[RMDB]
RNA sequence: GGGAACGACUCGAGUAGAGUCGAAAAGAAAAGUAGACGACGAAAGAAACGUGCCGGCGAAAGUCGUCGAAACGCCGAAAGCGAAAUAGUGCAGGCACGAAGCACUAGAAAGCUACGAAAGAAACAAGGGUAGUUACAUGUUCGCAUGUAACUACCCAAAAGAAACAACAACAACAAC
Reactivity to DMS in 0.01 (KOAc 150mM, MgCl2 10mM, bicine 150mM(pH8.5), 24C), signal-to-noise 1, nucleotides 027 to 126: g050a100a070a050a030g000u000a050g000a000c060g000a040c000g090a080a130a140g030a000a070a080c010g000u000g050c000c000g010g020c200g050a030a140a270g000u000c000g010u000c000g000a100a080a050c220g000c000c000g000a030a110a080g040c000g000a090a030a130u030a000g000u000g000c010a050g000g000c000a000c010g030a090a110g000c000a000c010u000a000g080a050a050a300g000c000u000a110c090g000a200a090a140g070a130a050a050c080a030a010
Reactivity to 2A3 in 0.01 (KOAc 150mM, MgCl2 10mM, bicine 150mM(pH8.5), 24C), signal-to-noise 1, nucleotides 027 to 126: g010a000a030a000a000g020u030a000g000a000c020g000a000c000g200a120a090a240g130a180a110a050c000g000u000g060c000c000g000g060c030g200a070a070a000g000u010c000g030u000c010g000a020a000a000c070g000c010c020g190a130a080a000g010c000g050a000a000a170u040a000g020u020g000c010a040g020g000c020a000c000g000a010a000g000c000a000c070u000a020g010a150a070a000g010c010u000a060c100g110a180a000a280g040a000a070a000c040a000a120
An RNA of 177 nucleotides, treated with DMS and 2A3 and read out base by base. For DMS the reverse transcriptase was MarathonRT. The reactions ran in a buffer of 150 mM KOAc, 10 mM MgCl2 and 150 mM bicine (pH 8.5), at 24 C. Source: RMDB library OK1LIB, as collected in RNAgym. The 2A3 profile rests on 839 reads.